[RMDB]
Chemical mapping of a 177-nucleotide RNA with 2A3 and DMS. The DMS profile rests on 1,268 reads. The reactions ran in a buffer of 150 mM KOAc, 10 mM MgCl2 and 150 mM bicine (pH 8.5), at 24 C.
RNA sequence: GGGAACGACUCGAGUAGAGUCGAAAAACAAGUAUUAGAGGCACUGCCUGCCCAGUGACUAAAGUUUAACGGCCGCGGUAUCCUGACCGUGCAAAGGUAGCAUAAUCACUUGUUCCUUAAUUAGGGAUCAUGUGCACAGUUUCGACUGUGCACAUGAAAAAGAAACAACAACAACAAC
Reactivity to 2A3 in 0.01 (KOAc 150mM, MgCl2 10mM, bicine 150mM(pH8.5), 24C), signal-to-noise 2, nucleotides 027 to 126: a000c010a000a010g050u040a070u100u100a040g040a170g070g000c060a010c070u010g030c010c030u000g010c000c010c040a000g020u030g020a020c020u160a300a020a170g040u050u010u110a060a020c020g000g000c020c030g000c020g000g000u020a040u110c030c060u070g070a010c000c000g000u010g070c100a110a090a020g000g000u030a000g070c030a040u040a080a020u050c040a000c020u010u020g020u040u040c000c010u110u170a210a210u160u180a080g000g100g010a070
Reactivity to DMS in 0.01 (KOAc 150mM, MgCl2 10mM, bicine 150mM(pH8.5), 24C), signal-to-noise 2, nucleotides 027 to 126: a070c040a030a020g010u000a030u020u000a080g000a190g000g000c160a120c050u000g000c020c000u010g000c060c030c080a120g000u010g000a040c060u020a080a130a140g010u010u010u000a140a180c160g000g000c040c060g000c030g020g020u000a100u010c090c070u010g000a140c000c000g010u000g000c230a030a050a090g010g010u000a020g030c040a130u000a070a050u010c120a020c010u000u000g000u000u000c000c000u020u000a070a120u010u010a130g000g000g000a120
The 2A3 profile rests on 1,519 reads. It was measured as part of the RMDB library OK2TRN.